An RNA of 177 nucleotides, treated with DMS and 2A3 and read out base by base.
RNA sequence: GGGAACGACUCGAGUAGAGUCGAAAACGCGUCGAAGGACGAGAGUAAGGCGUACAUAGGCACAGAGACAGCGCGGAACACACGUUUGCACAGCCUGCACGUGGCGGCUAUAGGGAGCAGGCGCUGCGGCAUGACCAACAUUCGUGUUGGUCAUGCCAAAAGAAACAACAACAACAAC
Reactivity to DMS in 0.01 (KOAc 150mM, MgCl2 10mM, bicine 150mM(pH8.5), 24C), signal-to-noise 1, nucleotides 027 to 126: c100g000c020g000u000c000g000a190a060g000g000a060c060g000a100g000a080g010u000a110a110g000g000c080g030u020a090c090a040u050a080g000g000c010a070c030a030g000a080g010a040c070a000g000c010g000c070g030g000a120a040c200a070c100a070c010g040u010u030u010g000c000a120c150a140g010c000c000u000g000c010a050c090g000u000g010g000c090g020g020c030u000a060u010a120g030g000g020a050g000c060a040g020g020c000g000c090u000g000c060
Reactivity to 2A3 in 0.01 (KOAc 150mM, MgCl2 10mM, bicine 150mM(pH8.5), 24C), signal-to-noise 3, nucleotides 027 to 126: c030g000c020g020u060c040g060a200a070g070g000a010c030g030a010g020a000g100u070a100a030g030g000c000g030u070a020c020a090u130a040g040g000c050a020c000a060g090a000g000a030c000a020g000c030g000c040g010g030a070a010c030a000c000a000c120g040u060u140u090g020c030a030c030a060g050c020c010u040g000c010a040c060g040u030g020g010c050g010g000c040u100a080u190a200g060g030g040a040g000c020a000g030g000c040g000c010u030g020c030
Background
Source: RMDB library OK1LIB, as collected in RNAgym. For DMS the reverse transcriptase was MarathonRT. The 2A3 profile rests on 2,202 reads. The RNA was probed in 150 mM KOAc, 10 mM MgCl2 and 150 mM bicine (pH 8.5) at 24 C.